[RMDB]
RNA sequence: GGGAACGACUCGAGUAGAGUCGAAAAGGAUAUAACUUCGGUUAUAUCCAAAGAAACUGGAUGGCGCGGCGAGCUGCAGCCGCAGUGAAUCAAAUGCAGCAAAAACUCGAAGCUUCGGCUUCGAGAAGGUGUAGAGAAAGUUCGCUUUCUCUACACCAAAAGAAACAACAACAACAAC
Reactivity to DMS in 0.01 (KOAc 150mM, MgCl2 10mM, bicine 150mM(pH8.5), 24C), signal-to-noise 2, nucleotides 027 to 126: g010g010a020u000a000u000a000a000c000u000u010c190g010g000u000u000a000u000a010u000c000c000a050a040a090g000a080a100a110c070u010g020g020a060u010g020g030c110g020c000g000g000c020g000a060g010c000u000g020c000a140g040c000c000g010c020a050g020u020g000a070a100u000c120a010a010a060u000g000c000a010g030c010a030a030a080a080a060c000u000c000g020a000a000g010c000u000u020c200g020g010c010u000u000c000g000a000g020a020a030
Reactivity to 2A3 in 0.01 (KOAc 150mM, MgCl2 10mM, bicine 150mM(pH8.5), 24C), signal-to-noise 3, nucleotides 027 to 126: g000g000a000u010a000u010a000a010c010u040u070c110g010g000u000u000a000u000a000u020c000c000a000a000a010g010a010a100a010c100u120g070g110a100u080g100g090c070g000c020g030g010c010g010a040g000c000u010g000c000a000g000c010c010g000c030a020g070u120g110a030a050u120c030a040a010a050u080g000c000a000g000c000a010a000a010a050a040c000u000c000g000a000a000g000c010u070u110c170g080g000c000u000u010c000g030a000g000a000a020